[RMDB]
RNA sequence: GGGAACGACUCGAGUAGAGUCGAAAACAUCUUUCCUCCCUACACAGUGACUCCAGCUUGGGAGGGGCAGGGCUAGGCUGAGCCAGCACUCCCUGUGGUGACUGCCUGCCACGUGCAGCUCUGGAGUAAAACCUGGAGAAGUUCGCUUCUCCAGGAACUAAGUCAGAGUCUUCGGACUCUGACUUAGAAAAGAAACAACAACAACAAC
Reactivity to 2A3 in 0.01 (KOAc 150mM, MgCl2 10mM, bicine 150mM(pH8.5), 24C), signal-to-noise 1, nucleotides 027 to 156: c040a110u080c150u170u090u050c010c030u040c010c050c060u180a170c180a050c030a130g050u080g120a020c000u000c000c000a000g020c040u030u030g020g010g010a000g010g000g010g000c000a040g000g000g030c040u230a020g000g000c000u020g060a070g160c000c000a080g020c030a040c030u110c020c070c020u040g050u030g050g000u000g030a080c070u070g040c000c000u020g030c040c010a090c140g130u140g000c000a020g030c010u060c060u090g020g020a010g000u010a000a030a000a010c000c000u000g000g000a000g000a000a010g040u060u100c180g060c120u000u000c000u000c000c000a000g000g000a000a000